[RMDB]
RNA sequence: GGGAACGACUCGAGUAGAGUCGAAAACUGGUUGGACUCCUGUCCAAUGCGGCUAGCGGUGACACGUGGAUCGACGAUUACCGUUCCGUGAAUGCAAAGGUCAUGAAUGCGGUGAAGGUCCAUGACGGUCAUGGCGUGCAUUCGUGCACGCCAUGACAAAAGAAACAACAACAACAAC
Reactivity to DMS in 0.01 (KOAc 150mM, MgCl2 10mM, bicine 150mM(pH8.5), 24C), signal-to-noise 1, nucleotides 027 to 126: c180u010g030g040u010u000g090g000a010c060u010c190c170u110g000u000c000c010a030a030u000g020c000g110g010c300u000a060g020c070g020g000u030g000a030c060a030c120g010u040g000g010a080u040c000g010a050c200g000a300u090u000a050c000c040g000u000u020c070c000g020u000g040a040a040u000g000c300a010a070a060g000g010u000c000a000u010g100a080a030u000g000c000g000g040u000g010a000a060g010g000u000c000c000a130u010g010a070c120g100
Reactivity to 2A3 in 0.01 (KOAc 150mM, MgCl2 10mM, bicine 150mM(pH8.5), 24C), signal-to-noise 2, nucleotides 027 to 126: c000u100g050g080u030u040g060g060a030c010u150c110c110u150g000u000c000c020a010a000u180g000c020g000g020c070u060a100g000c000g000g070u020g000a060c060a050c300g060u000g000g200a060u060c040g000a030c060g010a040u040u210a000c000c000g030u020u000c000c060g000u000g070a080a040u110g000c150a130a010a100g300g020u000c020a040u000g010a140a000u130g050c030g060g000u080g070a100a050g070g000u010c020c000a010u060g000a040c100g080
Structure probing data (DMS and 2A3) for a 177-nucleotide construct.
DMS adducts were read by reverse transcription with MarathonRT.
The RNA was probed in 150 mM KOAc, 10 mM MgCl2 and 150 mM bicine (pH 8.5) at 24 C.
DMS (dimethyl sulfate) methylates the pairing face of unpaired adenines and cytosines.
The data come from the RNA Mapping Database (RMDB), library OK1LIB.
For 2A3 the reverse transcriptase was SuperScript II with manganese.